[RMDB]
RNA sequence: GGGAACGACUCGAGUAGAGUCGAAAAGAUAUGGAAGGAAGCUCCGAAGAACAUAUGCGAACUCGGAAACGAGCUAACAUAUGGGAGGAGCUCCUUCCUAAGUCAAAGGCCUGCUUCGGCAGGCCAAGUGUUUAAUAGCCUUCGGGCUAUUAAACACAAAAGAAACAACAACAACAAC
Reactivity to DMS in 0.01 (KOAc 150mM, MgCl2 10mM, bicine 150mM(pH8.5), 24C), signal-to-noise 1, nucleotides 027 to 126: g010a030u000a300u000g010g010a000a010g000g000a090a060g010c000u000c000c010g040a110a130g010a170a230c030a010u000a000u000g000c130g010a090a270c010u000c000g010g000a110a100a090c010g010a030g000c010u010a180a040c010a000u000a020u000g000g000g010a070g000g030a000g010c010u000c020c000u010u000c000c000u000a010a020g000u010c030a060a130a060g010g020c000c000u010g000c010u000u020c190g040g000c000a010g000g000c000c000a000a010
The data come from the RNA Mapping Database (RMDB), library TTRDEL. An RNA of 177 nucleotides, treated with DMS and read out base by base. High DMS reactivity at an A or C suggests that its Watson-Crick edge is free. For DMS, 926 sequencing reads were counted. For DMS the reverse transcriptase was MarathonRT. Conditions: 150 mM KOAc, 10 mM MgCl2 and 150 mM bicine (pH 8.5), 24 C.